[RMDB]
RNA sequence: GGGAACGACUCGAGUAGAGUCGAAAAUCAGCGUUCGCGCUGAACUUGCGUACUACGAAUGCUUAAGGAGGUAUGAGCCUCAUCCCAAAUAGGAUGAGGCCAUACUACCCACCCUUAAGAACUACAUUCGUAUCGCUACCACCAACUUCGGUUGGUGUCCCAAUUAUGGCUUCGGCCAUAAUUGGGAAAAAGAAACAACAACAACAAC
Reactivity to 2A3 in 0.01 (KOAc 150mM, MgCl2 10mM, bicine 150mM(pH8.5), 24C), signal-to-noise 3, nucleotides 027 to 156: u040c000a000g030c030g040u070u110c190g030c000g000c120u020g000a030a010c040u060u190g030c020g050u090a130c030u000a010c030g000a000a020u000g070c010u000u000a000a000g000g020a020g000g000u000a010u010g020a030g000c000c000u000c000a020u020c000c000c030a220a240a170u300a080g000g000a000u000g010a000g000g010c000c000a000u000a000c000u020a020c000c020c020a110c030c000c010u000u000a000a020g000a100a100c100u140a010c130a010u010u000c010g000u000a040u300c020g010c000u010a030c010c010a000c000c000a000a000c000u030u050c170g120g040u010u010g000g000u050g070
Reactivity to DMS in 0.01 (KOAc 150mM, MgCl2 10mM, bicine 150mM(pH8.5), 24C), signal-to-noise 1, nucleotides 027 to 156: u000c000a000g020c010g060u000u040c260g020c050g020c000u020g010a020a040c160u000u050g010c060g000u010a180c040u000a040c000g000a060a000u000g010c000u000u000a040a040g000g000a280g020g040u000a080u000g010a180g090c010c000u060c010a030u000c000c000c000a030a000a280u010a040g020g010a030u010g000a000g100g000c010c000a000u010a000c010u000a020c010c000c020a300c260c000c000u000u000a040a000g000a080a280c010u000a130c020a040u000u000c010g030u000a010u010c100g020c000u040a080c110c010a020c010c000a000a010c010u000u040c230g050g000u000u010g010g030u000g030

Conditions: 150 mM KOAc, 10 mM MgCl2 and 150 mM bicine (pH 8.5), 24 C. Structure probing data (2A3 and DMS) for a 207-nucleotide construct. The 2A3 profile rests on 1,785 reads. High 2A3 reactivity points to a flexible backbone, as in loops and unpaired stretches. 2A3 adducts were read by reverse transcription with SuperScript II with manganese.